About this RNA: The record gives the reactivity of an RNA of 177 nucleotides to 2A3. It was measured as part of the RMDB library RFM100. Conditions: 150 mM KOAc, 10 mM MgCl2 and 150 mM bicine (pH 8.5), 24 C. For 2A3, 510 sequencing reads were counted.
RNA sequence: GGGAACGACUCGAGUAGAGUCGAAAAUGGCCGAAAGAGCAAGGGUUCCUCGGCAAUGCUUAUCAGCCGAGGGUUAGCCGAUCCUAAGGCCCGUCGUAAUUCGAGCGGGUCAAAAGGGAAACUGGUUCACCAACACAUGCUUCGGCAUGUGUUGGUGAAAAGAAACAACAACAACAAC
Reactivity to 2A3 in 0.01 (KOAc 150mM, MgCl2 10mM, bicine 150mM(pH8.5), 24C), signal-to-noise 1, nucleotides 027 to 126: u200g030g000c030c030g060a110a090a030g160a000g040c000a000a000g090g000g000u140u080c000c000u000c000g000g000c070a160a000u050g000c110u290u300a110u290c060a040g300c000c000g000a000g040g000g000u020u020a020g070c000c010g000a040u070c000c000u010a140a000g000g000c000c000c000g000u040c000g050u030a210a280u290u130c000g000a000g090c000g000g000g000u000c000a000a080a000a090g020g000g160a000a010a000c040u050g230g000u000u000